[RMDB]
RNA sequence: GGGAACGACUCGAGUAGAGUCGAAAACACACAAGGUUCGCCUUGUGUGCAAGAAUAGACGAAUACUACCGUAGAAGUAUUCAGGUCACAUAACAACGGAAAUGGCGUUCUGCUUCGGCAGAACGAAGCAGUGCUCUUAGUUCGCUAAGAGCACUGCAAAAGAAACAACAACAACAAC
Reactivity to DMS in 0.01 (KOAc 150mM, MgCl2 10mM, bicine 150mM(pH8.5), 24C), signal-to-noise 1, nucleotides 027 to 126: c000a000c000a000c030a020a010g020g010u000u000c300g010c000c000u000u010g010u000g010u000g000c080a070a080g000a080a130u000a040g010a060c050g010a040a000u000a010c010u000a050c100c200g010u000a060g000a160a010g030u000a000u000u010c000a070g020g010u010c050a130c300a060u030a090a030c160a070a100c100g000g000a100a010a050u010g000g000c020g000u030u000c000u030g000c000u000u010c100g060g010c000a020g000a000a000c000g040a000a060
Reactivity to 2A3 in 0.01 (KOAc 150mM, MgCl2 10mM, bicine 150mM(pH8.5), 24C), signal-to-noise 1, nucleotides 027 to 126: c020a000c000a010c010a000a030g050g030u020u050c110g090c010c000u000u000g010u000g010u000g030c010a000a050g060a110a050u100a090g030a010c010g010a000a000u000a010c010u040a100c000c130g120u110a040g070a210a000g030u000a030u010u020c020a010g130g100u030c060a040c000a120u170a220a020c040a090a020c010g060g080a050a030a080u140g130g000c010g020u000u000c000u000g000c000u040u060c160g080g000c020a000g020a020a000c000g010a000a000